[RMDB]
RNA sequence: GGGAACGACUCGAGUAGAGUCGAAAACCAAGCUUAGAGUUGGAUCAUGUGGCCCAAUUGAAGAAAUGGACUACUUGAUUCGUAAAGUGGGGCGGAAUGCGUGAGGCUGGUUUCACAGAGCAGUGAACAGCUCCCGCUCUGUGCAGUGGAAGGAUAACGCAUAACGCGUGUUCGCACGCGUUAUGCGAAAAGAAACAACAACAACAAC
Reactivity to 2A3 in 0.01 (KOAc 150mM, MgCl2 10mM, bicine 150mM(pH8.5), 24C), signal-to-noise 1, nucleotides 027 to 156: c000c000a000a020g090c050u120u280a010g010a040g160u010u300g010g000a000u000c000a010u000g010u000g040g020c000c020c000a190a300u210u200g070a100a140g080a080a050a000u030g000g050a020c000u000a000c000u000u000g000a000u090u000c030g070u110a000a000a040g110u100g010g010g020g000c080g150g000a150a040u180g020c070g050u120g010a000g030g120c000u000g130g190u000u080u040c010a010c010a010g230a020g100c070a000g000u040g110a030a010c000a020g020c020u000c000c030c000g020c000u000c010u000g000u000g050c010a010g060u070g070g010a150a000g010g020a100u040a190a050